[RMDB]
RNA sequence: GGGAACGACUCGAGUAGAGUCGAAAACGAAGCGGUCAUCUACUCUCAAGUCGAUGUCAACUUCUGGCGUGUGCUCUGGGAGUACUUCGAGAACCAACUCGCAGACUUCAUCGAGCACUACGGCGUCUUACCAAUACCUGACAAGAUGACCGAAGUCCUUCCGAACAAUAUUCGUAUUGUUCGGAAGAAAAGAAACAACAACAACAAC
Reactivity to DMS in 0.01 (KOAc 150mM, MgCl2 10mM, bicine 150mM(pH8.5), 24C), signal-to-noise 3, nucleotides 027 to 156: c070g030a070a110g030c060g000g000u000c020a040u000c010u020a050c000u000c080u020c140a040a070g030u000c060g000a110u000g030u000c020a040a060c020u000u010c020u000g010g030c000g030u000g010u000g010c030u000c010u010g030g000g000a040g030u000a040c030u000u000c000g000a050g010a090a200c220c300a130a150c020u000c010g030c100a110g010a080c020u000u000c020a130u000c160g000a030g040c030a040c020u000a060c050g000g020c070g020u010c060u010u000a020c080c010a070a140u000a070c060c050u000g030a080c050a150a090g000a020u000g010a070c000c010g000a050a060g000u000c030
Reactivity to 2A3 in 0.01 (KOAc 150mM, MgCl2 10mM, bicine 150mM(pH8.5), 24C), signal-to-noise 9, nucleotides 027 to 156: c060g040a040a010g060c010g010g010u010c000a000u000c010u060a080c040u080c040u070c180a100a070g060u060c060g080a080u080g040u050c050a040a050c070u110u070c060u130g060g020c030g010u070g000u000g010c000u010c050u110g030g000g020a010g020u100a300c000u000u020c010g010a010g010a080a080c070c030a070a140c010u000c000g010c010a000g000a030c010u000u010c020a110u130c130g000a000g000c020a000c000u030a020c010g050g010c010g020u010c050u080u110a120c040c040a130a080u120a170c040c070u070g030a030c030a070a020g010a020u020g050a080c040c010g000a020a000g020u010c000